[RMDB]
RNA sequence: GGGAACGACUCGAGUAGAGUCGAAAAGGGACGCGAGUUUUUGGCGCAGUUGAGACCGAUCGAUGAUGCUCUAAUGCGCCACGUGGAUAUCCACAAUUCGUUGGAUCAUCCAGGAAUUGUGCAAAUACCCUCGUCCCUAUUUCGAUAGGGACGAGGGAAAAGAAACAACAACAACAAC
Reactivity to 2A3 in 0.01 (KOAc 150mM, MgCl2 10mM, bicine 150mM(pH8.5), 24C), signal-to-noise 2, nucleotides 027 to 126: g000g010g030a060c080g040c050g020a060g030u080u060u030u140u090g020g010c000g000c000a040g030u130u050g030a010g010a040c090c060g060a080u150c090g130a180u150g020a050u130g110c000u000c010u020a080a030u010g000c000g000c000c000a000c000g000u050g010g000a050u020a020u060c010c000a000c000a010a060u090u060c070g120u170u050g000g010a080u150c060a070u000c090c000a000g000g020a020a030u010u030g030u030g040c050a060a110a040u090a110
Reactivity to DMS in 0.01 (KOAc 150mM, MgCl2 10mM, bicine 150mM(pH8.5), 24C), signal-to-noise 2, nucleotides 027 to 126: g010g000g000a070c060g010c070g000a100g010u030u000u000u000u000g040g010c000g070c000a050g000u000u010g000a030g000a120c100c060g010a140u020c130g030a100u000g020a080u000g020c010u000c010u000a050a070u000g000c000g020c010c000a030c180g000u000g000g010a060u000a110u000c120c000a010c020a020a090u000u030c090g010u040u000g010g020a150u000c170a040u010c000c000a060g010g000a040a030u010u000g010u010g010c210a020a060a110u000a120

Structure probing data (2A3 and DMS) for a 177-nucleotide construct. The DMS profile rests on 1,242 reads. The RNA was probed in 150 mM KOAc, 10 mM MgCl2 and 150 mM bicine (pH 8.5) at 24 C. Values cover nucleotides 27 to 126.